An RNA of 177 nucleotides, treated with 2A3 and DMS and read out base by base. Reactivities are given for positions 27 through 126. For DMS, 1,088 sequencing reads were counted. For DMS the reverse transcriptase was MarathonRT. The RNA was probed in 150 mM KOAc, 10 mM MgCl2 and 150 mM bicine (pH 8.5) at 24 C.
RNA sequence: GGGAACGACUCGAGUAGAGUCGAAAAACUCCACCUUCCUCAAGGAUGAACUCAGACCAACGGCUAAGGUUGAACAGGGACUGACCAGAAUCGUCGAAGCUGCUCCCAUCCAUGCUAUCGUCGCUGGGCUGUGUUACACGUUCGCGUGUAACACAGCAAAAGAAACAACAACAACAAC
Reactivity to 2A3 in 0.01 (KOAc 150mM, MgCl2 10mM, bicine 150mM(pH8.5), 24C), signal-to-noise 2, nucleotides 027 to 126: a000c000u000c000c020a030c000c020u100u100c000c020u100c040a010a080g030g020a030u090g050a050a050c020u030c050a040g030a190c000c010a060a010c030g020g000c020u040a080a050g100g000u010u060g080a090a070c110a120g000g000g090a060c030u100g030a060c020c030a060g080a080a160u140c060g040u020c010g060a060a010g000c020u060g000c030u010c000c010c000a000u020c040c000a040u120g060c000u080a090u220c070g070u060c010g000c060u040g000g100
Reactivity to DMS in 0.01 (KOAc 150mM, MgCl2 10mM, bicine 150mM(pH8.5), 24C), signal-to-noise 2, nucleotides 027 to 126: a100c090u000c020c050a110c090c050u000u000c020c000u000c070a180a070g000g010a050u000g030a060a100c090u000c020a050g000a140c080c020a080a060c130g010g000c030u000a090a110g000g000u000u000g060a060a090c050a090g020g030g000a090c080u000g010a110c080c060a120g030a040a140u000c120g000u010c010g030a090a080g010c010u000g000c050u000c000c000c020a120u000c060c020a050u000g000c030u000a140u020c130g000u010c110g020c020u000g040g010